[RMDB]
RNA sequence: GGGAACGACUCGAGUAGAGUCGAAAAAAUUUGAGCGUCGCACACACACAGACUAAGUCUGCUGCUGACAGAGCCUAAACCGCUCUGUCAGUGUGCGAGAUAUCGUUCAUAAUGUGAGCAGAAGAAAUAUCAUAACCAACUUCGGUUGGUUAUGAUAAAAAGAAACAACAACAACAAC
Reactivity to 2A3 in 0.01 (KOAc 150mM, MgCl2 10mM, bicine 150mM(pH8.5), 24C), signal-to-noise 3, nucleotides 027 to 126: a000a000u060u010u020g000a000g010c050g030u030c020g000c010a010c000a000c010a000c010a000c010a000g010a020c060u200a290a050g030u010c010u010g050c040u040g000c020u000g020a000c000a000g000a000g000c010c020u030a060a060a030c000c010g000c020u010c000u000g000u000c000a000g000u000g010u000g010c020g000a010g000a000u100a040u130c000g010u020u030c010a010u060a140a070u170g070u100g110a060g040c080a030g050a190a010g060a010a210a020
Reactivity to DMS in 0.01 (KOAc 150mM, MgCl2 10mM, bicine 150mM(pH8.5), 24C), signal-to-noise 4, nucleotides 027 to 126: a080a060u000u000u000g000a020g020c010g010u000c010g020c000a000c020a080c150a300c180a040c010a010g000a020c030u010a200a130g010u000c000u000g010c080u000g030c180u010g010a000c000a000g000a010g030c010c010u000a050a070a120c300c300g000c000u010c000u010g000u000c000a010g010u010g000u000g000c000g000a020g000a120u010a090u010c030g020u000u000c010a000u010a080a060u010g010u010g000a130g000c060a090g010a040a070g000a080a050a080

Annotation: An RNA of 177 nucleotides, treated with 2A3 and DMS and read out base by base. Conditions: 150 mM KOAc, 10 mM MgCl2 and 150 mM bicine (pH 8.5), 24 C.